[RMDB]
RNA sequence: GGGAACGACUCGAGUAGAGUCGAAAACUCGCGGGCGUUCAUCCUCGAGAACUCGGCGGACGCGGUGAUGCGGUCGGCAACCGACAAGGUCCGCGAGGCGCUGGGCGUCCCGUCACGGGCCGAACAGUCGCUGAUGUGAUUUCGAUCACAUCAGCGAAAAAGAAACAACAACAACAAC
Reactivity to DMS in 0.01 (KOAc 150mM, MgCl2 10mM, bicine 150mM(pH8.5), 24C), signal-to-noise 2, nucleotides 027 to 126: c010u010c020g000c060g000g000g020c030g000u000u000c030a090u000c010c020u000c070g010a190g000a080a110c080u000c060g020g020c020g010g010a070c020g010c010g030g010u010g000a130u000g010c050g010g000u010c050g030g000c070a240a080c010c000g010a100c070a180a150g010g000u000c000c010g030c010g000a020g000g000c050g020c050u000g010g040g020c000g000u020c020c000c000g030u010c130a110c130g000g010g020c040c000g030a070a060c060a070g000
Reactivity to 2A3 in 0.01 (KOAc 150mM, MgCl2 10mM, bicine 150mM(pH8.5), 24C), signal-to-noise 2, nucleotides 027 to 126: c000u020c020g000c030g000g000g010c010g050u030u040c080a170u300c020c020u080c030g140a080g050a160a090c070u100c110g070g020c030g020g000a020c020g010c030g080g070u100g040a120u160g060c070g000g150u070c020g110g020c060a050a050c010c000g050a070c080a020a050g130g000u010c000c010g030c040g030a000g010g040c040g040c050u050g030g000g020c010g060u100c000c010c010g010u000c000a060c070g030g030g000c000c030g010a060a010c010a030g090
Chemical mapping of a 177-nucleotide RNA with DMS and 2A3.
The reactions ran in a buffer of 150 mM KOAc, 10 mM MgCl2 and 150 mM bicine (pH 8.5), at 24 C.
Values cover nucleotides 27 to 126.